[RMDB]
RNA sequence: GGGAACGACUCGAGUAGAGUCGAAAAGUAACUUUAUGUAUUCAUACUUAGAUUUAAUUUCUCGAAUUAGCUCAAAUCGCCCGAUGAAUAAUGUACAACAGUCUACUGCUAAACCAAUACGCAAAGACAUUAAUGGACAACAAAGGCGUUCAGAGUAUCCUAUUACGGAGUUCGCUCCGUAAUAGGAAAAAGAAACAACAACAACAAC
Reactivity to DMS in 0.01 (KOAc 150mM, MgCl2 10mM, bicine 150mM(pH8.5), 24C), signal-to-noise 2, nucleotides 027 to 156: g030u000a040a100c080u000u000u010a070u010g000u000a120u000u000c060a110u000a070c020u000u000a080g010a170u010u010u000a060a090u000u000u010c000u000c010g000a080a100u010u010a200g040c030u010c010a010a050a100u000c010g040c000c000c030g030a120u000g010a110a100u010a060a070u000g000u000a060c070a070a050c050a040g010u000c120u000a080c070u000g000c000u000a080a100a150c100c050a050a110u010a050c120g000c080a070a060a060g000a140c020a080u020u000a080a120u000g000g000a060c030a040a150c070a030a160a050g000g020c040g030u000u000c060a120g010a080g010u000a080
Reactivity to 2A3 in 0.01 (KOAc 150mM, MgCl2 10mM, bicine 150mM(pH8.5), 24C), signal-to-noise 2, nucleotides 027 to 156: g020u000a020a020c070u150u260u220a170u200g020u050a140u250u250c060a080u050a060c020u070u030a040g000a080u250u120u100a090a090u080u040u000c010u010c000g020a120a140u090u000a120g020c000u000c010a030a140a140u050c020g010c000c000c040g020a040u100g020a050a070u080a080a110u090g020u030a060c010a120a020c010a100g000u000c030u020a090c080u070g000c000u000a010a060a210c100c000a090a070u080a000c030g000c010a000a120a000g000a000c000a000u000u000a080a120u060g010g000a000c000a060a000c000a030a040a040g020g020c020g030u080u040c020a000g050a000g030u010a070
Structure probing data (DMS and 2A3) for a 207-nucleotide construct. For 2A3, 653 sequencing reads were counted. Values cover nucleotides 27 to 156. Source: RMDB library OK3TST, as collected in RNAgym. The reactions ran in a buffer of 150 mM KOAc, 10 mM MgCl2 and 150 mM bicine (pH 8.5), at 24 C.